Structure probing data (2A3) for a 207-nucleotide construct.
Conditions: 150 mM KOAc, 10 mM MgCl2 and 150 mM bicine (pH 8.5), 24 C.
RNA sequence: GGGAACGACUCGAGUAGAGUCGAAAAAGAUGAACAGAGAACGUGCUGACUGCGCUCGUUUGGAAAGGCCUCAUGGCCAAAGGAGGAGAGGCAUUAUGAGGAGCAGUGACCGAGUGGGCAGGACCCCCGGGGAUCAGGAAAGGUGCACGGGGGGAAAGCUAUGGGAGUGCUUCGGCACUCCCAUAGCAAAAGAAACAACAACAACAAC
Reactivity to 2A3 in 0.01 (KOAc 150mM, MgCl2 10mM, bicine 150mM(pH8.5), 24C), signal-to-noise 1, nucleotides 027 to 156: a000g080a070u170g010a070a000c050a020g000a000g000a080a000c010g010u070g000c040u040g070a180c020u060g020c060g050c050u020c040g040u000u020u180g110g040a160a170a050g050g000c050c080u230c100a090u100g000g020c050c070a070a070a030g020g020a010g000g030a010g040a050g010g040c050a040u160u100a080u130g030a020g000g050a000g020c000a010g080u000g050a020c000c060g000a020g010u050g000g030g000c000a000g000g030a100c000c020c000c000c010g000g020g020g000a020u090c030a040g100g000a080a110a010g090g020u110g080c020a020c000g000g000g010g000g010g010a050a030a020